[RMDB]
RNA sequence: GGGAACGACUCGAGUAGAGUCGAAAACGCGGUGUUCGCACCGCGGACAUCCUAAGUCAGAUGCCGAGGCUCGUUGUCAGCCUACUAUCGGAAACGAUAGAGGCUUGGAUUUACGAGCUAUCAUCUGAUAUGGACAACGUUCGGGUUCGCCCGAACGGUCAUGGAGUUAAUUCGUUAACUCCAUGACAAAAGAAACAACAACAACAAC
Reactivity to 2A3 in 0.01 (KOAc 150mM, MgCl2 10mM, bicine 150mM(pH8.5), 24C), signal-to-noise 5, nucleotides 027 to 156: c010g000c010g000g010u030g050u120u130c280g020c110a010c000c010g000c000g000g000a010c030a060u040c010c010u050a110a050g020u000c000a000g010a000u010g050c060c110g240a160g080g010c000u000c000g000u000u010g010u010c000a010g010c020c000u120a300c000u000a090u010c000g060g040a120a070a060c010g000a000u000a000g000a010g000g000c000u020u110g050g010a030u190u120u250a000c000g000a000g000c000u000a000u000c000a000u000c000u000g000a000u010a050u080g030g000a010c030a140a030c100g000u000u000c000g000g000g040u050u090c220g080c070c000c000g000a010a000c010g000
Reactivity to DMS in 0.01 (KOAc 150mM, MgCl2 10mM, bicine 150mM(pH8.5), 24C), signal-to-noise 2, nucleotides 027 to 156: c020g050c000g060g000u020g040u010u000c280g060c000a040c010c000g060c010g010g000a060c070a130u000c000c010u000a060a250g020u000c010a010g020a010u000g010c140c050g000a250g010g010c000u000c000g030u000u000g020u000c010a070g000c000c000u000a140c010u000a000u020c010g020g000a170a170a300c010g010a020u010a010g000a080g000g000c010u000u010g040g020a060u010u000u000a040c000g010a030g000c000u010a030u000c010a040u000c010u000g000a030u000a250u000g010g000a040c050a100a250c020g020u000u000c000g040g000g010u000u010c300g020c030c000c000g000a000a000c010g010

Structure probing data (2A3 and DMS) for a 207-nucleotide construct. 2A3 adducts were read by reverse transcription with SuperScript II with manganese. Values are in units of 0.01, from 0 to 300, in steps of 10. Source: RMDB library RNAMAK, as collected in RNAgym.